RNA sequence: GGGAACGACUCGAGUAGAGUCGAAAAGAUAUGGACGUACUACCAGCGAUAAGCUACACUCGGAAACGAGUGAAUAGCUUUUGACGCUGAUGUACGUCCUAAGUCAAAACGCAUCUUCGGAUGCGAACGAUCCGGAUGCGUUCGCGCAUCCGGAUCGAAAAGAAACAACAACAACAAC
Reactivity to 2A3 in 0.01 (KOAc 150mM, MgCl2 10mM, bicine 150mM(pH8.5), 24C), signal-to-noise 1, nucleotides 027 to 126: g000a020u000a030u040g040g010a010c020g000u040a010c020u010a070c070c040a000g010c080g150a120u040a300a000g050c000u020a000c000a000c010u000c040g030g000a050a100a000c020g010a010g070u070g000a040a120u030a000g070c000u000u070u070u170g210a140c200g020c010u020g040a000u040g030u000a000c000g000u000c000c000u020a050a030g010u000c040a000a000a050a090c000g000c000a010u010c000u080u090c300g300g020a010u020g000c000g000a000a000